[RMDB]
RNA sequence: GGGAACGACUCGAGUAGAGUCGAAAAUAAACUUUGGGUGAAAUUGUGUUAACUUGUAAUUUCCAUGUAGAUACAGAUAAGGCAGGAAUGAGUGUCUUAGGCAAUUAGAAAUAACUCAGUCUACUGUCCAAACAUGAUGUGGAUUUUGAGACCAAAACUAAACAGCACAGUUCGCUGUGCUGUUUAGAAAAGAAACAACAACAACAAC
Reactivity to 2A3 in 0.01 (KOAc 150mM, MgCl2 10mM, bicine 150mM(pH8.5), 24C), signal-to-noise 2, nucleotides 027 to 156: u080a030a080a010c040u090u060u010g040g030g010u080g070a060a100a120u090u010g040u010g020u090u090a120a060c080u120u100g020u210a090a060u030u060u000c000c010a010u040g020u050a060g000a180u080a180c090a040g060a030u140a150a030g010g000c000a000g100g050a060a110u070g040a030g040u040g020u000c000u020u060a070g090g010c040a020a080u040u040a170g050a050a140a020u110a070a030c010u010c050a010g040u000c040u040a080c020u020g000u070c020c000a000a060a110c030a050u090g020a020u100g060u080g010g000a010u020u000u020u160g060a030g000a010c010c000a000a050a000a060
Reactivity to DMS in 0.01 (KOAc 150mM, MgCl2 10mM, bicine 150mM(pH8.5), 24C), signal-to-noise 1, nucleotides 027 to 156: u050a100a080a100c050u010u010u010g010g010g030u000g010a090a100a080u000u000g020u020g010u010u000a070a080c050u000u000g020u030a000a110u020u000u010c000c030a130u000g020u000a130g000a260u000a160c080a080g020a180u000a100a080g000g010c000a120g000g030a060a140u000g010a120g020u000g000u000c040u000u000a060g010g000c080a020a130u010u000a050g020a080a060a150u000a080a030c040u010c020a060g020u010c000u000a020c010u010g040u000c020c020a030a110a150c060a010u010g000a070u020g010u010g040g000a120u000u020u000u000g010a080g020a100c060c060a050a090a090a230
The record gives the reactivity of an RNA of 207 nucleotides to 2A3 and DMS. The reactions ran in a buffer of 150 mM KOAc, 10 mM MgCl2 and 150 mM bicine (pH 8.5), at 24 C. For 2A3, 966 sequencing reads were counted. For DMS, 1,589 sequencing reads were counted. In probing experiments dimethyl sulfate is read out at A N1 and C N3, which are open when not base-paired.